[RMDB]
RNA sequence: GGGAACGACUCGAGUAGAGUCGAAAAGGGACCAAAGAUUUUAGGCUAAAAUUCGGAUGACAACUUUGCCUUGUCAUUAUUAUCAUGGUAUGAACCAAUGGUCUGCGGUCUGCUUUUAGCCAGAUACUCCUGAACGAAUAUUCGUAUUCGUUCAGGAAAAAGAAACAACAACAACAAC
Reactivity to 2A3 in 0.01 (KOAc 150mM, MgCl2 10mM, bicine 150mM(pH8.5), 24C), signal-to-noise 2, nucleotides 027 to 126: g010g000g000a000c010c010a000a040a000g020a000u020u040u080u100a070g020g000c050u060a120a000a060a210u180u150c090g070g020a010u010g000a000c010a020a020c010u210u200u210g050c010c000u000u010g010u000c000a010u000u070a070u090u070a110u150c090a050u130g110g040u110a050u160g040a040a060c000c000a000a070u040g020g010u010c020u010g030c010g020g000u010c010u000g060c000u010u010u010u040a030g090c020c020a030g030a110u120a100c050
Reactivity to DMS in 0.01 (KOAc 150mM, MgCl2 10mM, bicine 150mM(pH8.5), 24C), signal-to-noise 6, nucleotides 027 to 126: g000g000g000a020c010c000a080a300a050g010a010u000u000u000u000a200g010g020c020u000a050a060a110a110u000u000c100g010g010a020u000g000a010c020a000a010c070u010u020u010g020c200c220u000u010g000u000c000a000u010u000a070u010u010a070u000c110a070u000g000g010u000a100u010g010a110a080c020c000a030a100u000g000g010u000c010u000g000c300g000g000u000c010u010g000c040u010u000u000u000a160g010c020c010a090g010a100u010a080c160